[RMDB]
RNA sequence: GGGAACGACUCGAGUAGAGUCGAAAAGGUCCGCUGUUCGCAGCGGACCAAAUAAAAUCAGCGGUAUCGAGGCGUAAAAUAUUACCGCUGAACGCCUCGAUUAAACCGUGCCGUUCGCGGCACGGAACAAGAUGAUCUAGUUCGCUAGAUCAUCUUGAAAAGAAACAACAACAACAAC
Reactivity to 2A3 in 0.01 (KOAc 150mM, MgCl2 10mM, bicine 150mM(pH8.5), 24C), signal-to-noise 4, nucleotides 027 to 126: g000g000u000c000c000g010c000u010g020u040u070c210g010c100a000g000c000g010g000a000c000c000a000a000a000u020a000a010a000a030u070c020a010g060c020g100g040u070a020u060c010g010a010g020g010c020g000u030a040a060a110a090u230a080u140u160a040c010c020g020c050u020g020a000a010c000g000c000c000u010c000g000a010u040u120a040a050a030c000c000g000u000g000c000c000g010u030u040c270g000c000g090g010c000a000c000g000g000a000a020
Reactivity to DMS in 0.01 (KOAc 150mM, MgCl2 10mM, bicine 150mM(pH8.5), 24C), signal-to-noise 5, nucleotides 027 to 126: g020g020u000c000c000g030c010u000g010u010u020c180g030c010a020g020c000g000g010a000c000c010a000a010a030u000a050a070a090a090u010c090a050g010c060g000g000u000a040u000c020g000a020g000g020c010g020u000a050a060a090a090u000a090u010u010a150c030c030g010c040u000g000a060a030c020g020c000c000u000c020g010a060u000u010a050a110a120c010c000g020u000g010c000c000g030u000u010c210g010c020g000g000c000a000c000g010g010a050a120
Structure probing data (2A3 and DMS) for a 177-nucleotide construct. It was measured as part of the RMDB library M2PK50. The RNA was probed in 150 mM KOAc, 10 mM MgCl2 and 150 mM bicine (pH 8.5) at 24 C. For 2A3, 11,538 sequencing reads were counted.